This 177-nucleotide RNA was probed chemically with 2A3 and DMS. DMS adducts were read by reverse transcription with MarathonRT. In probing experiments dimethyl sulfate is read out at A N1 and C N3, which are open when not base-paired. The RNA was probed in 150 mM KOAc, 10 mM MgCl2 and 150 mM bicine (pH 8.5) at 24 C.

RNA sequence: GGGAACGACUCGAGUAGAGUCGAAAAGAUAUGGACGCAAGCAACAGCCUUGGGUCGGAAACGACCCAGAGGACAUGCUUGGUCCUAAGUCAAAACCCGUCCAUUAGGUUCGCCUAAUGGACGGGAAGUUUCAUAUAACGUUCGCGUUAUAUGAAACAAAAGAAACAACAACAACAAC
Reactivity to 2A3 in 0.01 (KOAc 150mM, MgCl2 10mM, bicine 150mM(pH8.5), 24C), signal-to-noise 6, nucleotides 027 to 126: g010a010u030a020u090g000g000a020c040g010c300a000a010g000c000a010a190c060a280g080c010c010u010u010g000g010g000u010c010g000g020a050a050a010c010g000a000c020c020c000a000g050a010g010g010a090c050a160u030g000c000u000u010g000g000u000c000c000u010a060a010g020u000c020a000a010a080a230c000c000c000g000u020c000c000a000u010u000a010g000g090u040u050c300g090c080c000u000a000a000u000g000g000a000c000g000g000g000a000a010
Reactivity to DMS in 0.01 (KOAc 150mM, MgCl2 10mM, bicine 150mM(pH8.5), 24C), signal-to-noise 6, nucleotides 027 to 126: g010a030u000a270u000g000g000a010c010g020c000a000a010g020c010a030a090c300a150g010c010c000u000u000g010g010g010u000c000g000g000a040a050a120c010g000a010c000c000c000a030g010a010g010g010a090c120a140u000g000c010u000u000g010g010u000c000c000u000a010a070g010u000c020a110a070a140a160c000c000c000g010u000c000c000a010u000u000a010g000g010u000u010c250g020c010c000u000a000a000u000g000g000a000c000g000g000g000a000a010